[RMDB]
Chemical mapping of a 177-nucleotide RNA with DMS and 2A3. The 2A3 profile rests on 2,489 reads. The reactions ran in a buffer of 150 mM KOAc, 10 mM MgCl2 and 150 mM bicine (pH 8.5), at 24 C. For 2A3 the reverse transcriptase was SuperScript II with manganese.
RNA sequence: GGGAACGACUCGAGUAGAGUCGAAAAGUCAUGGGAGCCGAGGGUGCCCGAAGCCGCCACGAUUCAGUGGUGUCCACGGCAAGAUCGGUGACUGGGACGAAGUCGUAACAAGGUAGCCGUAGGAGAACUGAAUAGAGUCGUUCGCGACUCUAUUCAGAAAAGAAACAACAACAACAAC
Reactivity to DMS in 0.01 (KOAc 150mM, MgCl2 10mM, bicine 150mM(pH8.5), 24C), signal-to-noise 4, nucleotides 027 to 126: g020u010c030a030u020g010g010g010a300g000c010c000g000a040g010g030g020u010g000c000c010c010g000a090a140g000c070c010g020c010c000a020c010g010a140u010u040c230a080g040u000g000g000u010g040u000c010c010a300c300g000g000c010a020a040g020a060u020c010g000g020u010g000a240c000u000g010g010g010a030c020g020a090a050g000u020c040g010u010a030a110c070a070a070g020g010u020a060g000c000c010g030u000a060g000g000a140g000a070a180
Reactivity to 2A3 in 0.01 (KOAc 150mM, MgCl2 10mM, bicine 150mM(pH8.5), 24C), signal-to-noise 3, nucleotides 027 to 126: g010u040c010a030u040g000g040g000a020g000c000c000g020a010g070g080g000u050g000c000c000c000g010a010a000g000c010c020g000c020c000a020c000g160a110u300u260c140a020g000u000g010g000u000g000u000c000c010a020c000g000g000c000a000a000g040a070u020c010g000g000u030g020a040c010u010g000g000g030a000c020g030a060a010g150u090c030g070u050a030a030c020a110a090g040g030u050a020g030c020c020g050u050a030g000g130a050g010a060a030